Overview
The data come from the RNA Mapping Database (RMDB), library VIROID. This 207-nucleotide RNA was probed chemically with DMS and 2A3. For 2A3, 9,655 sequencing reads were counted. 2A3 adducts were read by reverse transcription with SuperScript II with manganese. The reactions ran in a buffer of 150 mM KOAc, 10 mM MgCl2 and 150 mM bicine (pH 8.5), at 24 C. The DMS profile rests on 4,812 reads.
[RMDB]
RNA sequence: GGGAACGACUCGAGUAGAGUCGAAAAGGUGGAAACAACUGAAGCUUCAACGCCUUUUUUUCCUAUCUUCUUUAGCACCGGGCUAGGGAGUAAGCCCGUGGAACCUUAGUUUUGUUCCCUCGGGACUUACUUGUGGUUCCUGUGGUGCACUCCUGACCACAGUAACAAAGUUCGCUUUGUUACUGUGAAAAGAAACAACAACAACAAC
Reactivity to DMS in 0.01 (KOAc 150mM, MgCl2 10mM, bicine 150mM(pH8.5), 24C), signal-to-noise 2, nucleotides 027 to 156: g010g040u010g000g000a140a040a060c040a120a270c110u010g000a140a230g020c080u000u000c060a030a100c030g000c010c000u000u000u000u000u000u000u000c010c020u000a150u000c080u010u020c100u000u000u020a120g060c040a070c070c050g050g000g010c040u000a160g010g020g010a060g020u000a000a190g020c020c000c000g030u000g000g010a010a020c020c070u000u000a090g010u000u000u000u000g030u000u000c000c010c050u010c150g030g030g010a080c010u000u000a000c020u000u000g010u010g020g040u000u000c010c000u000g030u000g030g010u000g020c150a100c090u010c040c010u010g020a250c100
Reactivity to 2A3 in 0.01 (KOAc 150mM, MgCl2 10mM, bicine 150mM(pH8.5), 24C), signal-to-noise 9, nucleotides 027 to 156: g020g000u030g020g060a120a040a030c030a090a060c150u230g090a190a030g070c060u150u120c090a090a080c060g000c010c030u020u010u010u000u000u040u040c030c010u050a150u080c090u160u030c020u060u150u150a030g000c020a030c090c100g070g050g000c020u020a040g060g100g000a010g010u020a050a010g000c000c000c020g010u010g000g000a000a000c000c010u060u060a070g040u110u190u150u250g040u080u040c000c000c030u060c050g050g000g070a120c000u010u010a000c010u010u030g080u080g070g000u080u180c000c020u060g090u150g020g000u030g010c010a010c010u030c000c030u050g020a030c040